Conditions: 150 mM KOAc, 10 mM MgCl2 and 150 mM bicine (pH 8.5), 24 C. The record gives the reactivity of an RNA of 177 nucleotides to 2A3 and DMS. For DMS the reverse transcriptase was MarathonRT. It was measured as part of the RMDB libraries RFM100 and RFMREP. 2A3 adducts were read by reverse transcription with SuperScript II with manganese. Values cover nucleotides 27 to 126.
RNA sequence: GGGAACGACUCGAGUAGAGUCGAAAACCCUGAAGCGACUGGCUCAAGGGACGGGUCGACAAACAAAAACAACAAGCCCGAAAUCAUAAUAAAAACAAAGCACGCACCUACUUGGGGGGGAGCUUCGUACUAAACCAUUCUUCGGAAUGGUUUAGUAAAAAGAAACAACAACAACAAC
Reactivity to 2A3 in 0.01 (KOAc 150mM, MgCl2 10mM, bicine 150mM(pH8.5), 24C), signal-to-noise 6, nucleotides 027 to 126: c000c000c020u030g030a020a010g010c010g030a050c010u050g080g120c000u000c020a030a040g010g000g060a050c030g030g000g030u100c050g090a020c050a030a180a020c060a010a090a090a070a020c070a040a010c010a060a030g020c000c020c010g050a070a060a020u080c070a040u060a190a040u140a050a180a040a000a050c120a050a110a010g090c030a040c100g040c000a040c010c000u160a150c010u040u020g000g000g000g000g000g000g010a000g010c000u010u000c020g010
Reactivity to DMS in 0.01 (KOAc 150mM, MgCl2 10mM, bicine 150mM(pH8.5), 24C), signal-to-noise 5, nucleotides 027 to 126: c000c000c010u020g030a030a080g010c030g030a120c020u010g000g010c020u000c030a100a060g000g000g030a190c060g020g010g010u000c080g010a090c180a080a110a140c190a050a060a080a130a090c120a050a080c080a140a080g000c020c000c000g040a080a100a070u050c120a080u050a070a070u040a040a080a090a150a100c080a070a040a070g010c100a060c060g020c050a070c030c010u010a070c010u010u000g000g000g010g010g000g000g000a160g000c010u010u000c080g010